[RMDB]
RNA sequence: GGGAACGACUCGAGUAGAGUCGAAAAGAUAUGGAUGUACACUUCGAAGGGCAUGUGUCGGAAACGACAUUUGCUGUUGACGAAGCUGUACAUCCUAAGUCAAAAGACAGAGGUUCGCCUCUGUCAAGCAUAUACGGUCGUUCGCGACCGUAUAUGCAAAAGAAACAACAACAACAAC
Reactivity to DMS in 0.01 (KOAc 150mM, MgCl2 10mM, bicine 150mM(pH8.5), 24C), signal-to-noise 2, nucleotides 027 to 126: g000a070u000a300u000g000g000a030u000g030u010a010c000a030c000u000u000c000g000a300a170g000g000g000c010a030u010g000u010g040u030c000g040g000a100a030a180c030g010a040c000a020u000u010u010g000c030u010g000u000u020g000a300c090g000a030a020g010c170u010g000u000a020c010a000u000c030c010u000a010a030g010u010c010a140a070a080a090g010a040c000a000g020a000g020g000u010u020c300g010c000c010u000c000u000g000u000c000a050a050
Reactivity to 2A3 in 0.01 (KOAc 150mM, MgCl2 10mM, bicine 150mM(pH8.5), 24C), signal-to-noise 1, nucleotides 027 to 126: g040a020u060a010u160g010g010a040u010g020u030a000c000a020c000u000u000c070g230a290a200g150g000g000c010a010u000g010u000g000u000c000g030g000a040a000a000c000g020a040c010a020u030u030u000g000c010u010g230u130u060g200a240c300g000a010a010g000c140u000g000u000a000c010a000u000c000c000u010a020a040g010u000c010a000a020a010a220g000a000c000a000g030a020g040g000u120u140c300g130c070c010u070c000u000g000u020c010a000a000

Structure probing data (DMS and 2A3) for a 177-nucleotide construct. Values cover nucleotides 27 to 126. Conditions: 150 mM KOAc, 10 mM MgCl2 and 150 mM bicine (pH 8.5), 24 C. The data come from the RNA Mapping Database (RMDB), library TTRDES.